[RMDB]
RNA sequence: GGGAACGACUCGAGUAGAGUCGAAAAUGCGGCCACGGCUUCAGGUGCGUGUCCUUGUUAUACUUCAAGGGAGAGGUAAUCCUUCGCCAUGUUGAGAAACGGCGUAAAAACAGUGACUGAGCUUCGCCCGCCCUCUCGUAUUGGGAGGCGGAGGGAGCUAACUACACAAAUUCGUUUGUGUAGUUAGAAAAGAAACAACAACAACAAC
Reactivity to DMS in 0.01 (KOAc 150mM, MgCl2 10mM, bicine 150mM(pH8.5), 24C), signal-to-noise 1, nucleotides 027 to 156: u000g040c050g030g010c020c010a080c060g020g020c040u040u000c110a110g010g040u000g060c030g030u000g030u000c020c040u000u060g000u020u010a160u020a090c170u000u010c010a180a050g000g000g010a180g000a040g020g010u000a120a120u010c100c010u010u000c030g030c040c000a040u000g060u010u000g020a300g010a240a080a070c060g080g000c010g040u000a030a040a070a030a010c070a060g000u010g020a110c050u000g010a130g040c030u000u010c000g020c030c010c000g000c060c000c010u000c020u020c010g020u000a210u000u040g030g000g030a070g010g010c000g000g010a040g020g010g020a060g000
Reactivity to 2A3 in 0.01 (KOAc 150mM, MgCl2 10mM, bicine 150mM(pH8.5), 24C), signal-to-noise 2, nucleotides 027 to 156: u160g000c040g010g010c010c000a020c070g040g000c050u130u140c110a090g000g000u060g110c040g040u070g010u000c000c000u010u020g060u020u050a150u050a170c040u070u080c060a040a090g040g020g020a050g020a010g110g000u040a070a180u100c030c000u040u010c010g000c000c040a120u200g020u040u090g080a100g020a070a080a020c030g030g000c010g020u050a000a000a000a010a030c020a000g050u020g070a020c010u040g000a020g030c000u000u000c020g300c060c000c040g000c090c070c000u000c020u010c000g100u170a220u180u300g000g000g000a000g000g000c020g020g010a070g000g010g000a010g000